[RMDB]
RNA sequence: GGGAACGACUCGAGUAGAGUCGAAAAAAGCGUUGGUCCGCCGCAUCCAGAUGCCGCCAGCGAGCAGCUGCUGCCAGCCGAACGACUGCUGUAUAUCUUUGUGUCAGAUGGCAGCUUCUCCGACAAGGAGUACGGUACUCUUCGGAGUACCGUACUCAAAAGAAACAACAACAACAAC
Reactivity to 2A3 in 0.01 (KOAc 150mM, MgCl2 10mM, bicine 150mM(pH8.5), 24C), signal-to-noise 1, nucleotides 027 to 126: a000a000g100c060g010u010u000g010g000u000c050c010g030c080c040g000c000a010u040c040c070a120g010a210u060g040c020c010g020c060c000a010g040c000g020a020g000c030a010g010c000u040g010c010u020g000c030c010a030g040c040c030g070a080a060c080g040a030c070u040g080c020u060g140u110a150u010a070u160c070u020u120u090g130u060g030u080c000a040g000a030u030g000g000c000a000g040c020u000u000c060u000c010c000g050a050c040a030a080g120
Reactivity to DMS in 0.01 (KOAc 150mM, MgCl2 10mM, bicine 150mM(pH8.5), 24C), signal-to-noise 2, nucleotides 027 to 126: a120a030g000c030g030u000u000g000g020u000c090c040g040c150c070g040c060a030u000c010c130a130g010a070u000g000c000c070g000c030c030a070g010c030g010a090g020c060a030g000c050u000g010c050u000g030c070c010a040g030c050c140g000a130a100c070g000a070c040u000g020c050u000g010u010a050u000a060u000c020u000u000u000g010u000g000u000c060a120g010a130u010g010g010c000a020g040c010u000u010c020u000c010c040g030a100c140a110a200g010
An RNA of 177 nucleotides, treated with 2A3 and DMS and read out base by base. For DMS, 1,204 sequencing reads were counted. The RNA was probed in 150 mM KOAc, 10 mM MgCl2 and 150 mM bicine (pH 8.5) at 24 C. For DMS the reverse transcriptase was MarathonRT.